[RMDB]
RNA sequence: GGGAACGACUCGAGUAGAGUCGAAAACGCCACGCGGCGGCUGCCGCAAACCGGGCAGCGCAUGCGUUGCGACAGCAUGGCGAGCGGAAAAUCGCGUCCCCGUGUCGCCACCAGGGUGACCAGAUCCAGCCGGUGCUUCCACUGGCAUUCGCGCACGCUACACACCUACCUUCGGGUAGGUGUGUAGAAAAGAAACAACAACAACAAC
Reactivity to 2A3 in 0.01 (KOAc 150mM, MgCl2 10mM, bicine 150mM(pH8.5), 24C), signal-to-noise 1, nucleotides 027 to 156: c000g000c030c040a020c000g000c000g000g040c020g160g230c010u010g000c020c000g130c210a030a040a110c130c060g030g000g000c010a000g000c000g010c020a110u090g000c000g020u000u020g030c000g030a050c010a000g000c010a060u100g080g000c010g030a010g020c030g040g020a010a110a000a130u080c050g000c030g040u030c000c000c000c000g010u020g100u020c000g030c050c000a020c010c070a020g000g000g060u130g050a060c010c040a000g030a090u090c010c140a010g070c020c010g010g020u040g000c090u200u090c100c000a060c010u030g010g000c080a090u110u130c020g000c010g030c060a010c050g000